[RMDB]
RNA sequence: GGGAACGACUCGAGUAGAGUCGAAAAGUGACACGUGACCAAUGCCGAAAGAUUAAGGCAAGGGGUUAGCCGCAAGGCGAAGCUCUAAACCCAAGUCCCGGUGAAUGUCGGCCGUAACUAUAACGGUACUUUUUCAGUUCUUCGGAACUGAAAAAGUAAAAGAAACAACAACAACAAC
Reactivity to DMS in 0.01 (KOAc 150mM, MgCl2 10mM, bicine 150mM(pH8.5), 24C), signal-to-noise 2, nucleotides 027 to 126: g000u020g020a000c040a040c140g070u000g000a080c000c060a080a210u040g000c040c000g000a040a070a060g010a010u000u000a110a100g000g000c030a010a300g020g000g000g000u000u000a260g000c010c000g000c300a040a160g000g000c000g030a100a180g000c020u000c000u000a010a210a270c020c040c040a060a090g000u020c030c080c000g040g030u000g000a070a000u040g000u010c050g000g010c000c000g000u000a060a120c160u040a070u030a040a030c000g000g010u000
Reactivity to 2A3 in 0.01 (KOAc 150mM, MgCl2 10mM, bicine 150mM(pH8.5), 24C), signal-to-noise 3, nucleotides 027 to 126: g080u030g030a060c020a040c170g050u110g010a020c020c030a010a020u080g060c000c000g120a100a100a010g030a060u090u160a100a080g000g010c030a030a070g030g000g040g000u250u020a000g000c040c030g010c110a050a070g000g000c000g000a010a000g000c000u000c000u030a050a140a090c000c000c000a020a020g030u050c130c070c000g050g000u070g020a250a150u130g010u020c000g030g000c000c000g050u050a110a050c080u110a150u010a270a000c050g080g000u020